The record gives the reactivity of an RNA of 177 nucleotides to DMS and 2A3. The RNA was probed in 150 mM KOAc, 10 mM MgCl2 and 150 mM bicine (pH 8.5) at 24 C. For 2A3, 1,501 sequencing reads were counted. It was measured as part of the RMDB library M2PK50.
RNA sequence: GGGAACGACUCGAGUAGAGUCGAAAAGAGAGCUGCUUCGGCAGCUCUCCGUCAGGUAGUUCCUAUCUCAAUUACCUGUAGUGGCCAAGGUCCGGAUAGGAAGAGAGCCCUGCUUCGGCAGGGCUAAUCAGUCAAACUUUUUCGAAAGUUUGACUGAAAAAGAAACAACAACAACAAC
Reactivity to DMS in 0.01 (KOAc 150mM, MgCl2 10mM, bicine 150mM(pH8.5), 24C), signal-to-noise 2, nucleotides 027 to 126: g010a010g000a010g030c000u000g020c010u000u000c210g010g030c000a000g010c000u000c000u000c000c030g010u010c020a030g010g000u000a020g010u000u000c020c010u000a030u010c020u000c130a080a060u010u000a030c010c000u010g000u010a090g020u000g000g000c030c020a140a100g000g010u000c180c140g000g000a030u000a020g000g000a120a130g000a170g010a060g020c010c000c000u000g000c010u000u010c180g020g010c000a010g000g000g010c000u000a000a040
Reactivity to 2A3 in 0.01 (KOAc 150mM, MgCl2 10mM, bicine 150mM(pH8.5), 24C), signal-to-noise 1, nucleotides 027 to 126: g020a000g000a000g010c010u020g000c000u080u090c190g100g000c020a000g020c000u010c000u030c000c000g040u050c020a000g000g060u020a010g050u000u020c010c010u020a040u030c040u030c020a070a160u100u050a030c000c000u020g020u170a150g090u070g060g020c010c030a080a030g050g040u080c080c020g050g010a010u000a010g020g030a060a010g080a010g010a010g010c000c000c000u000g000c010u040u050c130g110g000c020a000g000g010g000c000u000a000a000